This 207-nucleotide RNA was probed chemically with DMS and 2A3. DMS adducts were read by reverse transcription with MarathonRT. The DMS profile rests on 2,246 reads. The data come from the RNA Mapping Database (RMDB), library M2RFPK. The RNA was probed in 150 mM KOAc, 10 mM MgCl2 and 150 mM bicine (pH 8.5) at 24 C.
RNA sequence: GGGAACGACUCGAGUAGAGUCGAAAAAACAAACAUCAAAUCGCAUAGCAAAGAGUCAAAAUAAUAGAGAGCUUUGCGAGACCUACCAAGGGUGAAGAGAUACCAUCCAAGGAGCUGAAGAGAAAUCGAGAGCUCACGGCGUUCGCGCCGUGAGCAACAGAAUGAUUAAGUUCGCUUAAUCAUUCUGAAAAGAAACAACAACAACAAC
Reactivity to DMS in 0.01 (KOAc 150mM, MgCl2 10mM, bicine 150mM(pH8.5), 24C), signal-to-noise 1, nucleotides 027 to 156: a010a000c040a070a110a110c060a050u010c060a050a060a100u000c020g050c020a050u000a060g000c010a050a050a090g010a230g010u000c020a090a040a100a120u000a110a120u010a140g010a150g000a230g040c030u000u000u010g040c070g020a080g020a040c050c020u000a120c040c040a040a200g020g020g000u000g000a020a060g000a090g020a110u000a050c040c010a000u000c020c040a010a170g000g000a090g030c030u010g010a070a130g000a120g000a030a060a120u000c050g010a090g000a100g010c020u020c000a010c000g030g000c000g050u000u000c300g000c020g010c020c020g010u000g000a020g020c030a020a030
Reactivity to 2A3 in 0.01 (KOAc 150mM, MgCl2 10mM, bicine 150mM(pH8.5), 24C), signal-to-noise 5, nucleotides 027 to 156: a000a010c130a050a070a020c080a100u180c080a040a100a040u020c020g000c010a010u020a030g000c030a090a160a080g060a060g120u140c060a070a120a130a090u270a210a030u200a090g160a010g010a010g030c000u000u010u000g000c000g010a010g030a030c000c010u050a090c040c020a030a070g020g010g000u030g050a050a050g090a020g040a060u090a130c010c010a010u010c010c010a030a040g020g000a010g030c070u100g060a090a020g060a040g030a070a080a040u130c080g030a030g010a010g230c000u000c000a000c000g000g010c000g020u040u080c200g000c030g030c080c000g030u000g000a000g010c000a000a010